Source information: Structure probing data (2A3 and DMS) for a 177-nucleotide construct. The RNA was probed in 150 mM KOAc, 10 mM MgCl2 and 150 mM bicine (pH 8.5) at 24 C. Reactivities are given for positions 27 through 126. For 2A3 the reverse transcriptase was SuperScript II with manganese. Source: RMDB library TTRDES, as collected in RNAgym.
RNA sequence: GGGAACGACUCGAGUAGAGUCGAAAAGAUAUGGACGUCUCAUACAUCAACAGCCGAUUUCGGAAACGAAAUCGGACAUGAUGAUGAGGACGUCCUAAGUCAAAAGUAGAGCCUUCGGGCUCUACAAGGUGAUCUCUAUGUUCGCAUAGAGAUCACCAAAAGAAACAACAACAACAAC
Reactivity to 2A3 in 0.01 (KOAc 150mM, MgCl2 10mM, bicine 150mM(pH8.5), 24C), signal-to-noise 1, nucleotides 027 to 126: g000a080u100a120u240g010g000a000c010g020u000c000u030c020a070u180a300c000a000u060c030a080a250c060a180g080c000c010g000a000u000u000u030c020g000g040a050a060a070c000g010a000a010a000u000c000g000g040a020c010a020u020g020a000u030g010a010u020g020a060g150g070a020c000g000u020c000c000u000a040a010g030u000c000a000a000a060a060g000u010a000g010a000g000c010c030u040u050c300g120g000g020c030u010c010u030a000c000a010a010
Reactivity to DMS in 0.01 (KOAc 150mM, MgCl2 10mM, bicine 150mM(pH8.5), 24C), signal-to-noise 1, nucleotides 027 to 126: g000a050u000a300u010g000g020a010c000g040u000c000u030c000a020u000a200c000a000u000c000a020a080c300a260g010c000c000g000a000u000u000u010c010g020g010a120a060a240c000g040a000a000a000u000c010g020g000a000c120a090u000g040a020u010g000a040u000g010a080g000g030a010c000g030u000c000c000u000a000a120g020u000c070a070a110a170a170g010u000a000g000a000g000c000c000u000u040c160g040g020g000c000u000c000u000a000c000a050a080